[RMDB]
RNA sequence: GGGAACGACUCGAGUAGAGUCGAAAAGAUGAGACCUCUUCAUGUGUCAAGUGGAAUAAGUGGACACAUGUUGCAAACAACACCUACCAUGCUGUCAAUGGAAUAACAGAGGUUGACGGGCAGAUUACACCCCGAUUAGGUUCGCCUAAUCGGGGUGAAAAGAAACAACAACAACAAC
Reactivity to DMS in 0.01 (KOAc 150mM, MgCl2 10mM, bicine 150mM(pH8.5), 24C), signal-to-noise 2, nucleotides 027 to 126: g040a180u000g010a190g000a010c030c020u000c000u000u000c020a010u000g010u000g000u000c000a070a140g020u000g030g010a200a060u050a100a100g020u010g000g000a020c010a000c010a030u000g020u000u030g000c140a010a060a100c070a040a050c040a130c050c020u020a120c060c010a080u000g030c010u000g000u000c020a140a080u000g000g000a090a070u000a040a040c150a090g040a060g000g000u000u000g000a120c210g010g000g020c040a010g000a300u010u030a130
Reactivity to 2A3 in 0.01 (KOAc 150mM, MgCl2 10mM, bicine 150mM(pH8.5), 24C), signal-to-noise 2, nucleotides 027 to 126: g040a070u150g020a030g030a070c020c000u040c020u100u030c020a000u030g010u000g020u020c040a040a100g170u110g160g160a130a070u180a280a060g150u110g190g000a010c000a000c000a000u000g000u000u030g070c080a040a050a070c040a010a020c030a060c010c010u030a030c000c000a060u100g010c010u000g010u070c040a050a050u060g060g060a100a000u100a090a040c060a010g050a000g100g030u030u020g060a040c040g000g010g000c010a010g000a010u090u060a050
Chemical mapping of a 177-nucleotide RNA with DMS and 2A3.
Values cover nucleotides 27 to 126.